[RMDB]
RNA sequence: GGGAACGACUCGAGUAGAGUCGAAAACUCGAGGGCCUUCCUUCUUCGGUGAGCCCUCCUCUCCUCGUCGGAGAAUACUCCCUUGUUACUCUUCUUCCCCGGACCGGAGUCAACCUCCAUCCGAUCUGUUCGGGCUCUCUUCGCCGGGGGAGCUCCCCGGUUAGUCAGUGUUCGCACUGACUAACCGAAAAGAAACAACAACAACAAC
Reactivity to 2A3 in 0.01 (KOAc 150mM, MgCl2 10mM, bicine 150mM(pH8.5), 24C), signal-to-noise 1, nucleotides 027 to 156: c060u050c050g000a010g030g030g030c030c010u140u160c170c000u130u200c170u230u270c140g120g000u020g000a030g030c000c020c000u030c090c010u040c020u020c000c010u070c040g280u100c090g030g040a060g020a030a010u100a090c060u030c000c000c000u000u020g080u000u020a120c070u000c010u020u020c000u000u010c000c000c000c000g000g010a070c040c100g010g010a010g020u050c060a110a100c070c060u130c120c000a070u020c000c000g050a040u020c070u300g170u070u040c030g010g030g000c010u010c020u030c000u120u180c040g010c020c010g000g000g000g000g000a000g000c000u030c000c010c000